[RMDB]
RNA sequence: GGGAACGACUCGAGUAGAGUCGAAAAUACGGAUGGUAGAAGUAGUCUUACAUACGCGCUUACACUGCUAACGGAGGAGCGUAGAAGGGCAUCCGUAAAGAGACUAUAGUCGCCCUUCGGCCUCUCGCAUGCUCCACUUAUUCGUAAGUGGAGCAUGAAAAGAAACAACAACAACAAC
Reactivity to 2A3 in 0.01 (KOAc 150mM, MgCl2 10mM, bicine 150mM(pH8.5), 24C), signal-to-noise 3, nucleotides 027 to 126: u170a030c030g000g010a010u050g040g050u110a100g020a140a000g060u070a020g030u040c040u070u100a060c060a100u090a050c050g000c010g030c050u050u040a060c080a040c080u100g030c050u090a200a030c060g050g020a030g040g000a040g010c030g040u030a060g030a040a030g000g020g020c010a010u030c030c010g010u020a020a040a000g060a000g000a000c010u030a030u060a210g120u060c050g010c030c000c000u010u000c010g000g010c000c000u000c010u000c010g020
Reactivity to DMS in 0.01 (KOAc 150mM, MgCl2 10mM, bicine 150mM(pH8.5), 24C), signal-to-noise 5, nucleotides 027 to 126: u000a080c020g010g010a030u010g010g010u000a080g000a080a190g000u000a060g000u000c020u000u020a080c140a180u010a050c100g030c100g000c080u010u000a090c070a090c070u000g010c080u010a100a130c140g010g010a040g010g010a140g020c040g010u010a070g000a040a030g000g010g010c010a090u000c040c010g000u000a020a090a100g010a100g000a070c030u000a060u010a110g010u010c130g000c010c010c010u000u000c010g020g000c040c020u000c030u000c100g000